[RMDB]
Structure probing data (2A3 and DMS) for a 177-nucleotide construct.
The RNA was probed in 150 mM KOAc, 10 mM MgCl2 and 150 mM bicine (pH 8.5) at 24 C.
The DMS profile rests on 2,011 reads.
The 2A3 profile rests on 512 reads.
Source: RMDB library RFM100, as collected in RNAgym.
RNA sequence: GGGAACGACUCGAGUAGAGUCGAAAAGACGAGCAAAUGAGGCUUCCUCCUCUGUGGCGGGUUUCCCGCCGGAGGGAGCCGAUGUCCGAAAAUUUUAAAAGGCUAUCCCAAAAGUAGGGUUAGGCAAAUCAUAAGCUCCGUUCGCGGAGCUUAUGAUAAAAGAAACAACAACAACAAC
Reactivity to 2A3 in 0.01 (KOAc 150mM, MgCl2 10mM, bicine 150mM(pH8.5), 24C), signal-to-noise 2, nucleotides 027 to 126: g080a040c030g070a000g060c050a030a100a270u280g010a200g000g020c000u000u020c000c000u000c010c000u100c200u250g250u180g130g000c000g000g000g010u080u070u150c020c020c050g000c000c000g000g020a050g040g000g010a000g000c000c000g000a000u000g000u000c000c000g030a000a000a020a090u270u220u200u230a050a100a180a000g030g000c000u000a070u070c000c000c000a020a110a000a200g210u280a100g000g110g040u010u030a020g100g000c020a160a110
Reactivity to DMS in 0.01 (KOAc 150mM, MgCl2 10mM, bicine 150mM(pH8.5), 24C), signal-to-noise 2, nucleotides 027 to 126: g000a050c050g000a120g000c090a030a120a130u020g010a180g000g020c000u010u000c000c000u000c000c010u060c300u070g020u010g000g030c000g000g010g080u030u030u090c010c000c000g000c000c010g040g060a000g000g030g010a000g020c020c000g000a000u010g020u040c020c010g030a080a110a120a040u000u020u000u070a050a100a190a170g020g010c000u000a010u030c010c000c000a060a110a120a180g000u060a100g030g000g000u000u000a000g000g040c100a090a090